Source: RMDB library TTRDEL, as collected in RNAgym. This 177-nucleotide RNA was probed chemically with 2A3 and DMS. For DMS the reverse transcriptase was MarathonRT.
RNA sequence: GGGAACGACUCGAGUAGAGUCGAAAAGAUAUGGACUACCCACCGCAGGAACUACAGCGUGAACGUCGGAAACGACGUUCCGCUGCCUGCGAGGUCCUAAGUCAAAACACCCUGUUCGCAGGGUGAAUCUAUCUCAUUCCUUCGGGAAUGAGAUAGAAAAAGAAACAACAACAACAAC
Reactivity to 2A3 in 0.01 (KOAc 150mM, MgCl2 10mM, bicine 150mM(pH8.5), 24C), signal-to-noise 2, nucleotides 027 to 126: g020a020u100a100u240g010g000a010c020u210a240c010c040c010a010c000c030g010c000a010g020g040a030a060c150u180a100c300a040g020c000g120u300g070a000a000c000g000u000c010g030g040a040a050a050c020g000a000c000g010u010u000c010c000g000c010u000g000c000c000u000g010c000g000a000g000g000u000c000c000u040a300a050g090u050c060a000a040a180a070c010a000c000c000c000u000g040u050u120c300g030c150a000g000g000g000u000g000a010a000
Reactivity to DMS in 0.01 (KOAc 150mM, MgCl2 10mM, bicine 150mM(pH8.5), 24C), signal-to-noise 3, nucleotides 027 to 126: g010a080u010a220u000g000g000a010c010u000a130c030c030c020a300c120c000g000c000a010g000g000a110a030c060u010a300c000a010g010c000g010u000g030a010a000c010g020u000c010g010g010a080a130a170c000g000a010c010g000u000u000c000c010g010c000u000g000c010c000u000g010c000g000a050g000g010u000c000c000u000a040a090g000u010c100a060a050a140a230c010a000c000c000c000u000g000u010u010c150g010c020a010g000g000g010u000g000a030a040